[RMDB]
This 207-nucleotide RNA was probed chemically with 2A3. The RNA was probed in 150 mM KOAc, 10 mM MgCl2 and 150 mM bicine (pH 8.5) at 24 C. For 2A3 the reverse transcriptase was SuperScript II with manganese. Values cover nucleotides 27 to 156.
RNA sequence: GGGAACGACUCGAGUAGAGUCGAAAAUAACACUUUUUAUUGAUGCGCAAAAUUCUGCAGCGUUUACAAUGGAAACUCGCCUCAAAUCUGCAUUAUUUAUUUGAGUUAAAAUCAUUUCGUAAUAUUGUAGAUUUCCGUACAAAUUGUUAAGAAAUGACCAGCUUAGUAAAUUCGUUUACUAAGCUGGAAAAGAAACAACAACAACAAC
Reactivity to 2A3 in 0.01 (KOAc 150mM, MgCl2 10mM, bicine 150mM(pH8.5), 24C), signal-to-noise 1, nucleotides 027 to 156: u120a120a040c020a010c030u010u060u010u040u060a100u120u010g040a010u120g030c000g050c070a060a110a230a240u300u080c270u130g060c040a020g000c010g000u010u040u040a070c010a000a020u060g010g050a000a000a060c130u140c140g070c000c060u140c110a020a020a020u000c000u060g000c000a000u010u020a050u090u090u040a050u010u040u050g020a040g030u090u130a110a000a040a080u050c000a000u030u060u100c050g020u010a020a020u040a020u010u020g000u000a000g000a090u050u030u000c090c040g110u110a080c020a030a170a200u050u000g000u050u140a040a110g020a030a170a050u070g020a000